[RMDB]
This 207-nucleotide RNA was probed chemically with DMS and 2A3. The 2A3 profile rests on 963 reads. The RNA was probed in 150 mM KOAc, 10 mM MgCl2 and 150 mM bicine (pH 8.5) at 24 C. DMS adducts were read by reverse transcription with MarathonRT.
RNA sequence: GGGAACGACUCGAGUAGAGUCGAAAACCAGGAGGCUGCAUCCCUGCUGAGGACCUGCCAAACCUUCCUGCUUCCACCGGAUACUAGGGCACCACAGCAGCCCGAGAGCCACGUUCGUCCCACACAUGGACAACCUGACCCUCAGACCUCAGGGACAUAAUACGGGUACUUUCGAGUACCCGUAUUAAAAAGAAACAACAACAACAAC
Reactivity to DMS in 0.01 (KOAc 150mM, MgCl2 10mM, bicine 150mM(pH8.5), 24C), signal-to-noise 2, nucleotides 027 to 156: c020c000a150g030g000a150g000g050c010u000g020c000a120u020c090c020c020u000g040c060u000g030a140g020g000a090c030c020u020g030c000c010a050a040a080c020c030u000u000c000c020u000g030c060u000u000c060c030a150c090c080g010g010a220u010a120c100u000a100g020g000g010c040a170c020c070a180c020a050g060c000a090g010c010c000c070g010a050g010a050g020c020c010a080c090g000u000u000c060g000u000c020c010c030a170c180a100c160a040u010g010g010a080c020a020a070c030c020u040g030a060c020c000c020u010c020a100g000a120c000c030u000c020a070g020g000g010a090c020a140
Reactivity to 2A3 in 0.01 (KOAc 150mM, MgCl2 10mM, bicine 150mM(pH8.5), 24C), signal-to-noise 2, nucleotides 027 to 156: c010c010a020g030g070a030g010g000c070u070g030c060a130u060c000c000c000u070g000c010u020g020a070g000g010a060c020c020u060g040c020c010a110a040a120c010c010u080u050c010c000u040g000c040u100u040c000c050a070c050c040g030g030a080u100a130c050u070a090g030g010g010c030a030c050c060a080c070a030g100c030a030g010c000c000c000g030a060g000a010g050c010c030a060c030g020u050u030c030g020u010c050c070c040a150c000a030c030a150u180g010g020a010c000a010a030c030c020u080g020a110c020c040c000u050c040a060g050a130c000c080u080c020a010g020g000g040a000c030a040